[RMDB]
RNA sequence: GGGAACGACUCGAGUAGAGUCGAAAAGCCAUUCGUGGUGAGCGGUAUGCUAAAGAUCUACAUUAUGGUUUAGCUGACUCAAGGCCAGAGGGCAAAUUGAUGGAUGAUAAAAUUAACUUAGGCGAGCUAACACUUGCCUAUUCGUAGGCAAGUGUUAAAAAGAAACAACAACAACAAC
Reactivity to 2A3 in 0.01 (KOAc 150mM, MgCl2 10mM, bicine 150mM(pH8.5), 24C), signal-to-noise 7, nucleotides 027 to 126: g060c010c000a080u050u040c080g090u060g030g020u090g020a050g000c020g020g120u150a090u180g000c020u050a050a050a090g080a090u050c030u120a090c060a130u150u180a120u170g090g060u020u030u050a040g020c010u030g040a060c010u010c080a090a060g130g000c010c000a020g050a060g050g010g020c030a010a050a100u090u120g040a040u060g050g060a030u050g050a030u180a090a100a060a070u230u140a060a060c040u070u060a040g030g040c030g030a010g020c050
Reactivity to DMS in 0.01 (KOAc 150mM, MgCl2 10mM, bicine 150mM(pH8.5), 24C), signal-to-noise 5, nucleotides 027 to 126: g010c010c000a060u020u010c100g010u000g000g020u000g010a100g010c100g000g020u030a040u030g020c020u000a050a060a060g010a090u010c070u020a060c150a110u030u030a060u020g010g000u010u000u000a050g010c040u000g000a130c040u020c030a130a130g020g010c010c020a090g000a060g010g000g020c040a060a030a070u010u020g000a060u020g000g000a090u020g000a060u020a020a050a050a070u030u020a090a090c090u010u010a060g000g010c020g000a080g000c140
Structure probing data (2A3 and DMS) for a 177-nucleotide construct. It was measured as part of the RMDB library OK1LIB. DMS adducts were read by reverse transcription with MarathonRT. Reactivities are given for positions 27 through 126.